[RMDB]
RNA sequence: GGGAACGACUCGAGUAGAGUCGAAAAGUGUUGCAAAGCGGUUUGGUGAAAAUGUCACAUCCCAGUGGAGAUGUUGAGGCUUGUAUGGUUCAGGUUACCUGCGGUAGCAUGACUCUUAAUGGUCUUUAUGCAGUCAGCUUCGGCUGACUGAAAAGAAACAACAACAACAAC
Reactivity to 2A3 in 0.01 (KOAc 150mM, MgCl2 10mM, bicine 150mM(pH8.5), 24C), signal-to-noise 2, nucleotides 027 to 129: g020u030g030u020u000g060c010a000a080a030g000c050g030g100u070u110u170g040g010u050g000a070a000a060a060u190g080u070c000a030c010a050u000c000c000c050a000g020u060g060g000a120g040a010u050g030u060u060g000a000g000g000c000u030u030g040u010a090u200g090g000u070u030c020a010g050g000u000u030a020c000c000u060g000c010g000g000u020a000g000c030a020u010g000a070c000u000c020u070u080a130a080u100g000g020u000c000u000u090u030a190u180g020
Reactivity to DMS in 0.01 (KOAc 150mM, MgCl2 10mM, bicine 150mM(pH8.5), 24C), signal-to-noise 2, nucleotides 027 to 129: g060u000g010u030u010g040c140a100a060a080g030c030g000g000u040u040u000g000g000u080g030a060a060a100a080u040g020u020c080a070c070a130u000c000c010c060a120g040u000g050g020a100g030a080u020g010u000u000g050a000g000g000c060u000u000g030u000a070u030g030g030u000u000c070a000g000g040u000u050a000c000c000u000g000c090g020g040u000a000g050c040a070u000g020a050c040u010c080u040u050a070a140u050g020g010u040c020u000u030u030a050u050g030
Structure probing data (2A3 and DMS) for a 170-nucleotide construct. Reactivities are given for positions 27 through 129. The RNA was probed in 150 mM KOAc, 10 mM MgCl2 and 150 mM bicine (pH 8.5) at 24 C.